[RMDB]
RNA sequence: GGGAACGACUCGAGUAGAGUCGAAAAAUGGACGGAUCAUGGGUUUCUAUCCAAAACCCUGAGGACACUAAGUGGUGCUCCUCGGAUCAACUAGUAAGCAUCCACGAUUUUCACUCUGAUGAAAUAGGUCCGUAAGAUCGUUCGCGAUCUUACGGACAAAAGAAACAACAACAACAAC
Reactivity to 2A3 in 0.01 (KOAc 150mM, MgCl2 10mM, bicine 150mM(pH8.5), 24C), signal-to-noise 1, nucleotides 027 to 126: a010u040g030g030a000c050g000g000a010u010c050a100u140g110g000g000u050u000u030c070u030a220u010c050c050a050a040a010a020c000c010c000u020g010a010g000g020a000c010a000c080u110a300a150g130u170g260g030u010g070c120u030c000c000u000c000g000g000a030u020c020a020a080c010u050a040g080u150a100a000g060c030a030u000c020c000a070c110g050a030u010u000u010u080c020a040c010u080c110u110g180a300u040g090a010a000a110u110a070g170
Reactivity to DMS in 0.01 (KOAc 150mM, MgCl2 10mM, bicine 150mM(pH8.5), 24C), signal-to-noise 2, nucleotides 027 to 126: a030u020g000g010a040c060g040g000a050u010c020a180u000g000g000g010u000u000u010c080u000a100u020c130c100a080a020a030a060c020c000c030u000g000a020g010g000a080c020a020c030u000a140a200g010u000g000g020u000g000c250u000c030c000u000c000g020g000a020u000c100a160a090c150u000a100g020u000a050a080g000c200a060u010c000c000a070c120g030a110u000u000u000u010c010a000c010u000c180u000g000a170u000g000a060a030a030u010a090g020
This 177-nucleotide RNA was probed chemically with 2A3 and DMS. 2A3 adducts were read by reverse transcription with SuperScript II with manganese. Values cover nucleotides 27 to 126. The reactions ran in a buffer of 150 mM KOAc, 10 mM MgCl2 and 150 mM bicine (pH 8.5), at 24 C.